Structure probing data (2A3 and DMS) for a 177-nucleotide construct.
DMS adducts were read by reverse transcription with MarathonRT.
2A3 adducts were read by reverse transcription with SuperScript II with manganese.
Reactivities are given for positions 27 through 126.
The 2A3 profile rests on 3,317 reads.
Conditions: 150 mM KOAc, 10 mM MgCl2 and 150 mM bicine (pH 8.5), 24 C.
The DMS profile rests on 1,396 reads.
RNA sequence: GGGAACGACUCGAGUAGAGUCGAAAAUCCGUUGUCUUCGGACAACGGAAAAGAAGCGCGGACAGAAAAGCACGAGCUCGCCGUGACGCGCAAAGGCGAUAAAAAGCUCAAACUUCGGUUUGAGCAACCUGUUAUACACCUUCGGGUGUAUAACAGGAAAAGAAACAACAACAACAAC
Reactivity to 2A3 in 0.01 (KOAc 150mM, MgCl2 10mM, bicine 150mM(pH8.5), 24C), signal-to-noise 2, nucleotides 027 to 126: u000c000c000g000u020u000g020u010c020u030u070c260g100g000a010c010a000a000c000g000g000a020a040a020a010g010a080a030g000c000g020c000g040g130a050c070a250g260a070a130a010a000g060c010a000c040g040a050g100c020u000c010g000c000c000g010u030g010a030c000g020c000g000c000a100a000a000g000g000c000g010a000u170a070a110a010a000a010g030c000u000c000a000a010a000c020u050u070c250g120g000u010u000u000g010a000g010c000a000a010
Reactivity to DMS in 0.01 (KOAc 150mM, MgCl2 10mM, bicine 150mM(pH8.5), 24C), signal-to-noise 2, nucleotides 027 to 126: u010c000c000g010u000u000g020u020c000u000u020c210g000g000a000c010a010a030c000g010g000a000a000a060a050g000a140a070g000c010g000c000g020g010a120c090a160g030a060a060a110a160g000c000a030c050g000a160g020c160u020c000g010c110c010g030u010g020a110c000g000c000g000c010a080a050a150g000g000c010g010a040u000a050a100a090a070a060g000c000u000c000a030a000a020c010u000u000c280g030g000u000u000u000g000a000g010c010a020a010